This 207-nucleotide RNA was probed chemically with 2A3. Reactivities are given for positions 27 through 156. The data come from the RNA Mapping Database (RMDB), library RNAMAK. The 2A3 profile rests on 960 reads. The reactions ran in a buffer of 150 mM KOAc, 10 mM MgCl2 and 150 mM bicine (pH 8.5), at 24 C.
RNA sequence: GGGAACGACUCGAGUAGAGUCGAAAAGGGGUCGCUGUUGUCGCUUCACAGAGCUUGGAUUUAUACAGCUGAAGCCUCCACGGCUGUAUUGUCAGCUCUGUAGAGCGAGAACAGCGACGGAGGCACCCAAACCGAUCCUACUUCGGUAGGAUCGGAAGUACCAUACUGGCUUCGGCCAGUAUGGUACAAAAGAAACAACAACAACAAC
Reactivity to 2A3 in 0.01 (KOAc 150mM, MgCl2 10mM, bicine 150mM(pH8.5), 24C), signal-to-noise 1, nucleotides 027 to 156: g150g000g020g000u020c010g000c040u000g010u000u000g180u000c000g010c010u250u210c080a010c000a000g020a000g000c050u150u300g160g010a010u150u300u200a040u040a000c010a000g000c020u030g030a200a030g000c000c000u000c010c020a060c010g000g000c000u000g000u020a030u000u030g000u040c040a010g000c000u000c020u030g010u050a030g000a000g000c000g000a010g000a000a000c000a000g000c000g000a000c010g000g000a010g000g020c000a020c000c000c020a020a070a070c000c000g000a000u010c000c000u000a010c000u040u050c280g090g000u010a000g010g000a000u000c000g000g000a020a010